[RMDB]
RNA sequence: GGGAACGACUCGAGUAGAGUCGAAAAGAGGAGACCUUAGGGGAGACCGAAGCGAGGAGGAAAGCAAAGAAAGCAACGGGGCUAGCCGGUGGGUGUUCCUCCCCCCGAGAGGGGAAGAGUGAGGCUUGAGGCCAGAACUUCGGUUCUGGCAAAAGAAACAACAACAACAAC
Reactivity to DMS in 0.01 (KOAc 150mM, MgCl2 10mM, bicine 150mM(pH8.5), 24C), signal-to-noise 3, nucleotides 027 to 129: g020a050g000g000a070g040a060c100c040u020u040a020g020g020g000g010a110g000a020c050c000g040a180a090g010c170g030a130g040g030a060g000g000a000a000a000g050c190a030a030a060g000a040a030a010g000c100a080a060c090g030g000g020g030c060u020a100g030c000c010g020g030u040g010g040g020u020g020u000u000c000c010u020c000c030c010c000c010c010g000a150g050a070g010g000g000g000a030a030g050a020g010u000g020a000g010g030c060u000u010g020a060g010
Reactivity to 2A3 in 0.01 (KOAc 150mM, MgCl2 10mM, bicine 150mM(pH8.5), 24C), signal-to-noise 2, nucleotides 027 to 129: g020a030g000g000a030g010a050c000c000u030u050a060g000g020g010g000a020g000a020c000c010g020a060a030g040c050g020a050g020g000a040g010g050a050a030a000g000c050a000a020a110g070a040a070a010g000c040a000a140c040g040g020g060g000c040u020a050g030c000c040g070g000u100g000g000g000u050g090u050u030c000c000u040c000c000c000c000c000c000g060a000g040a060g090g010g000g020a020a010g010a010g010u170g020a000g000g000c010u020u050g050a060g100